[RMDB]
RNA sequence: GGGAACGACUCGAGUAGAGUCGAAAACGCCUAAUCUUCGGAUUAGGCGAAAAGUGGACGUGGAGGAGGCUUCAAAGGAAACGACGAUCACUCCCGAACAGAAAAGACUGGAGUUCGCUCCAGUCAAGUUCUGUCAUAUGUUCGCAUAUGACAGAACAAAAGAAACAACAACAACAAC
Reactivity to DMS in 0.01 (KOAc 150mM, MgCl2 10mM, bicine 150mM(pH8.5), 24C), signal-to-noise 3, nucleotides 027 to 126: c020g040c000c000u000a000a000u000c000u000u010c210g030g020a020u000u000a000g000g000c000g010a000a010a050a090g020u000g000g000a100c030g000u000g020g010a130g000g010a100g010g000c040u010u000c080a050a140a220g010g000a080a080a110c050g020a130c150g000a090u000c100a050c020u000c010c010c000g020a070a040c110a060g000a070a100a120a110g010a020c000u010g010g010a020g010u000u020c220g000c000u000c000c000a010g000u000c000a010a060
Reactivity to 2A3 in 0.01 (KOAc 150mM, MgCl2 10mM, bicine 150mM(pH8.5), 24C), signal-to-noise 3, nucleotides 027 to 126: c000g000c000c010u000a000a010u000c010u060u050c220g030g010a010u000u010a010g000g000c020g000a000a000a000a000g060u040g020g030a040c020g020u050g010g050a060g030g010a060g040g060c040u090u030c090a140a090a050g070g030a110a090a000c050g050a010c040g020a030u030c040a020c070u000c000c000c010g010a050a020c040a070g120a060a130a020a020g000a010c000u000g000g010a010g000u010u070c140g060c090u000c020c000a000g000u000c000a000a000
An RNA of 177 nucleotides, treated with DMS and 2A3 and read out base by base. The RNA was probed in 150 mM KOAc, 10 mM MgCl2 and 150 mM bicine (pH 8.5) at 24 C. Values cover nucleotides 27 to 126.